[RMDB]
RNA sequence: GGGAACGACUCGAGUAGAGUCGAAAACGUCAAGGAUUCGUCCUUGACGAAAGUCGCGGCUUGAGGGCGUAAACGGCUGCGCACACACACGACCCUCAAGCCAAACAGGUGGAUUCGUCCACCUGAACUUGCUUCGAUACUUCGGUAUCGAAGCAAGAAAAGAAACAACAACAACAAC
Reactivity to 2A3 in 0.01 (KOAc 150mM, MgCl2 10mM, bicine 150mM(pH8.5), 24C), signal-to-noise 2, nucleotides 027 to 126: c000g000u020c000a010a000g010g030a020u060u100c190g070u060c060c000u000u010g000a000c010g000a000a010a000g040u000c030g000c090g110g000c010u000u000g000a010g020g000g000c010g020u030a020a110a100c070g080g000c050u220g020c110g000c000a080c000a000c020a010c020a010c120g300a300c000c000c000u000c000a000a000g040c000c000a000a030a010c000a010g020g000u000g000g000a020u010u070c160g090u030c040c000a000c000c000u010g000a010a020
Reactivity to DMS in 0.01 (KOAc 150mM, MgCl2 10mM, bicine 150mM(pH8.5), 24C), signal-to-noise 1, nucleotides 027 to 126: c000g000u010c000a000a010g030g010a010u000u030c240g020u000c010c010u010u000g010a010c000g000a070a040a050g030u020c110g010c200g000g000c000u010u000g040a000g000g000g020c000g020u000a040a070a110c210g000g000c030u010g000c070g040c030a060c060a040c140a120c150a010c040g000a060c000c040c000u000c010a020a000g000c000c010a000a020a220c030a010g000g020u000g000g000a070u000u010c260g000u030c000c000a010c000c000u000g000a070a120
This 177-nucleotide RNA was probed chemically with 2A3 and DMS. Reactivities are given for positions 27 through 126. The RNA was probed in 150 mM KOAc, 10 mM MgCl2 and 150 mM bicine (pH 8.5) at 24 C. Source: RMDB library M2PK50, as collected in RNAgym.